[RMDB]
RNA sequence: GGGAACGACUCGAGUAGAGUCGAAAACGUGCGAAAGCACGAGCCAUGGAAACAUGGCGGCGGCAUGAGCGCGAGGACCGGUACGGCCGCCACUCGGGCGACAUGAGGAUCACCCAUGUUCCUCAAACACGAUCACUGGAUUCGUCCAGUGAUCGUGAAAAGAAACAACAACAACAAC
Reactivity to DMS in 0.01 (KOAc 150mM, MgCl2 10mM, bicine 150mM(pH8.5), 24C), signal-to-noise 2, nucleotides 027 to 126: c050g010u000g000c000g020a200a130a150g000c000a010c010g010a210g020c000c000a010u000g000g010a180a080a120c020a000u000g000g000c000g000g000c040g030g010c050a020u000g020a210g010c040g040c070g000a080g000g020a090c300c010g000g020u000a120c100g030g000c000c000g000c020c020a070c090u000c010g010g010g010c020g000a100c130a090u000g000a030g010g000a060u000c080a120c020c010c020a080u000g000u000u000c020c000u000c060a020a060a220